[RMDB]
Annotation
Conditions: 150 mM KOAc, 10 mM MgCl2 and 150 mM bicine (pH 8.5), 24 C. Structure probing data (2A3) for a 207-nucleotide construct. Reactivities are given for positions 27 through 156. 2A3 adducts were read by reverse transcription with SuperScript II with manganese.

RNA sequence: GGGAACGACUCGAGUAGAGUCGAAAAGGACCAAGUCCGCGACGCGAUCGACCACGCCUUCGCGACCCUGGACGUCGUCGCCUUCUUCAGCGACGUCGCCUACUGGGAAACCGACGUCGACGCAUGGCGGGACGCCUACGGCGAGCGCCUCCUCGUCCUCUCUGUAGCGUUUCGACGCUACAGAGAGAAAAGAAACAACAACAACAAC
Reactivity to 2A3 in 0.01 (KOAc 150mM, MgCl2 10mM, bicine 150mM(pH8.5), 24C), signal-to-noise 1, nucleotides 027 to 156: g030g020a030c070c070a100a000g010u120c010c030g000c020g070a020c010g080c000g050a300u000c000g060a060c010c000a110c050g070c000c010u170u050c040g010c070g140a160c000c000c000u070g090g000a030c010g000u000c010g040u030c000g000c020c020u260u230c050u240u200c110a040g000c000g000a000c000g000u010c000g030c000c000u140a180c160u050g010g030g000a100a130a030c020c000g040a060c060g010u000c000g000a000c000g000c000a020u130g140g020c060g000g000g000a000c000g000c020c010u090a120c110g050g010c050g000a040g030c060g060c000c000u030c020c000u000c000g030u000c000